[RMDB]
RNA sequence: GGGAACGACUCGAGUAGAGUCGAAAAUAUACCAUUGUGUAUAGUACCUUACACUGCAUUGUACUAUUAUGCUACAUUCUAUUUUACUAAUGAGCCUGCAUUUAUUAUGCAUGUUUCUUGGUACAUUCAGCUAGCUAUUGUUCGCAAUAGCUAGCUGAAAAGAAACAACAACAACAAC
Reactivity to 2A3 in 0.01 (KOAc 150mM, MgCl2 10mM, bicine 150mM(pH8.5), 24C), signal-to-noise 1, nucleotides 027 to 126: u070a010u010a020c000c010a040u000u170g040u020g010u040a000u000a020g040u020a020c010c000u050u030a040c110a020c030u180g050c010a050u030u050g010u020a010c040u060a090u230u020a020u070g000c010u000a020c030a080u100u030c020u120a160u110u150u050u030a020c010u020a030a030u050g010a000g000c010c020u020g020c010a000u000u080u000a210u300u000a010u050g010c010a000u010g020u000u060u000c010u010u010g000g010u010a070c010a090u000u030